Source: RMDB library M2RFPK, as collected in RNAgym.
Chemical mapping of a 207-nucleotide RNA with DMS and 2A3.
RNA sequence: GGGAACGACUCGAGUAGAGUCGAAAAGUAGAGUGUAUCAUGUCAGUAAGCAUGCCGGGGAAUGGUGGUUUACCCCGUCAUCAAAUGAUUACCGACCAAUAAUUGGCGAAACUCGUUUCGCGUUGGCAAAGUCACGGCGUGUUCGCACGCCGUGAAAGUAGUUUUCAAGUUUCGACUUGAAAACUACAAAAGAAACAACAACAACAAC
Reactivity to DMS in 0.01 (KOAc 150mM, MgCl2 10mM, bicine 150mM(pH8.5), 24C), signal-to-noise 2, nucleotides 027 to 156: g000u000a120g000a100g030u000g030u000a080u010c050a120u010g030u020c020a040g020u000a070a080g010c010a070u000g010c110c000g030g000g020g020a100a200u000g000g000u020g000g000u000u010u000a300c000c000c020c000g000u010c010a040u020c060a090a070a090u010g050a070u000u010a060c040c030g010a030c010c050a050a030u020a060a180u000u010g030g010c000g000a140a080a030c060u000c120g010u000u000u000c020g010c090g000u000u000g000g010c030a030a060a180g010u000c000a020c000g000g000c020g050u000g010u000u000c210g000c000a030c030g020c040c000g040u000g000a000a000a050
Reactivity to 2A3 in 0.01 (KOAc 150mM, MgCl2 10mM, bicine 150mM(pH8.5), 24C), signal-to-noise 5, nucleotides 027 to 156: g100u110a020g030a060g100u140g010u050a040u100c040a040u080g080u090c060a030g070u160a110a030g030c050a020u010g030c030c000g010g000g010g010a040a040u050g030g020u030g010g050u040u060u150a100c000c000c000c000g020u020c000a010u000c010a000a090a020u050g010a020u020u090a030c010c040g040a060c020c030a030a030u170a130a090u120u120g070g000c010g000a010a020a030c060u050c070g030u000u020u010c010g000c000g000u000u030g040g000c060a130a060a030g060u030c000a010c000g010g000c010g000u010g000u000u060c080g020c100a000c010g000c000c020g000u000g000a000a010a000
Values cover nucleotides 27 to 156. Conditions: 150 mM KOAc, 10 mM MgCl2 and 150 mM bicine (pH 8.5), 24 C. For 2A3 the reverse transcriptase was SuperScript II with manganese.